The data come from the RNA Mapping Database (RMDB), library OK2TST. Structure probing data (DMS) for a 177-nucleotide construct. The reactions ran in a buffer of 150 mM KOAc, 10 mM MgCl2 and 150 mM bicine (pH 8.5), at 24 C.

RNA sequence: GGGAACGACUCGAGUAGAGUCGAAAAUGGCAAGGUGGAAGGAGGCCGGACGCCACAACCGUUCGUACAACCGUAAGCUGGGCUUGGCGCCGGGCCGGAUUGGACGGGAUAGCCGAAUUGACCGGCGUAUGUAGGCGCAGUUCGCUGCGCCUACAUAAAAAGAAACAACAACAACAAC
Reactivity to DMS in 0.01 (KOAc 150mM, MgCl2 10mM, bicine 150mM(pH8.5), 24C), signal-to-noise 1, nucleotides 027 to 126: u020g020g020c010a090a090g130g030u000g000g000a110a100g010g000a050g030g010c020c010g010g000a140c090g000c000c020a030c160a070a140c060c010g000u010u000c010g020u000a040c150a110a050c060c030g010u010a050a110g010c040u010g000g010g010c080u010u010g040g000c140g020c010c010g000g000g050c050c040g010g010a150u000u010g000g020a010c060g000g000g010a130u000a130g010c020c000g000a090a140u000u000g010a100c120c010g010g010c020g000